[RMDB]
An RNA of 177 nucleotides, treated with DMS and 2A3 and read out base by base. For DMS, 10,229 sequencing reads were counted. It was measured as part of the RMDB library TTRDEL.
RNA sequence: GGGAACGACUCGAGUAGAGUCGAAAAGAUAUGGACCGUUGGCACUUUGAUGACCUCGGAAACGAGCAAGAAGGCCACUGCGGUCCUAAGUCAAAGGUCCUGUUCCAGUUCGCUGGAACAGGACCAACAUAUAAAUGUAGUUCGCUACAUUUAUAUGAAAAGAAACAACAACAACAAC
Reactivity to DMS in 0.01 (KOAc 150mM, MgCl2 10mM, bicine 150mM(pH8.5), 24C), signal-to-noise 7, nucleotides 027 to 126: g010a040u000a300u010g000g000a010c000c000g020u000u000g010g010c000a100c010u000u000u000g010a110u010g010a090c300c000u000c010g010g010a100a080a160c010g000a010g000c020a070a110g010a020a010g000g000c010c010a050c300u000g010c000g010g000u000c000c000u000a010a080g010u000c040a080a080a130g010g010u000c010c000u000g000u000u010c000c000a010g000u000u010c290g010c010u010g000g010a010a010c000a000g000g000a000c010c000a010a030
Reactivity to 2A3 in 0.01 (KOAc 150mM, MgCl2 10mM, bicine 150mM(pH8.5), 24C), signal-to-noise 6, nucleotides 027 to 126: g020a020u080a070u160g000g010a010c000c010g000u030u040g020g000c060a150c300u010u030u050g120a250u210g050a120c020c000u010c010g000g000a020a090a020c020g000a000g000c010a090a230g020a010a000g010g040c010c030a030c130u120g010c000g010g000u000c000c000u000a030a010g020u020c050a080a060a130g010g000u000c000c000u020g020u010u010c010c000a000g010u050u100c260g090c120u000g000g020a000a010c010a000g010g010a000c000c000a010a000